[RMDB]
RNA sequence: GGGAACGACUCGAGUAGAGUCGAAAACAGUGAAAGGGGAGGUCAGCGUCAGCAGCCCGCCGCUGAACGCAGGACAACGCCAAAAGUCGGCGGGGAAAGAUACAGGCUGAAGAUACAGCCAGUACAAGAUAGUCCUAGCUUUCGAGCUAGGACUAUCAAAAGAAACAACAACAACAAC
Reactivity to DMS in 0.01 (KOAc 150mM, MgCl2 10mM, bicine 150mM(pH8.5), 24C), signal-to-noise 3, nucleotides 027 to 126: c080a090g010u000g000a020a100a040g010g000g000g000a050g020g010u000c070a110g010c010g030u020c020a070g050c070a130g030c010c000c010g020c060c010g040c010u020g020a100a060c140g000c020a150g020g000a060c090a120a100c070g010c070c080a020a050a080a050g010u010c080g000g000c050g000g000g000g020a020a060a060g000a100u050a020c020a080g010g000c000u000g020a080a100g010a200u060a040c000a000g000c000c000a120g000u010a010c160a090a110
Reactivity to 2A3 in 0.01 (KOAc 150mM, MgCl2 10mM, bicine 150mM(pH8.5), 24C), signal-to-noise 3, nucleotides 027 to 126: c020a060g060u060g200a040a030a080g010g030g000g000a120g100g020u050c020a010g000c000g000u000c010a000g050c000a010g080c020c000c000g000c030c010g000c000u010g030a020a010c040g000c010a040g030g090a020c040a270a060c160g040c040c000a000a040a040a000g170u180c050g010g010c020g000g050g000g030a080a020a000g140a040u050a020c010a010g000g000c000u010g040a110a000g020a090u120a050c000a000g000c000c000a000g010u020a030c010a060a080
The record gives the reactivity of an RNA of 177 nucleotides to DMS and 2A3.
It was measured as part of the RMDB library OK1LIB.
DMS adducts were read by reverse transcription with MarathonRT.
For 2A3, 1,847 sequencing reads were counted.
The reactions ran in a buffer of 150 mM KOAc, 10 mM MgCl2 and 150 mM bicine (pH 8.5), at 24 C.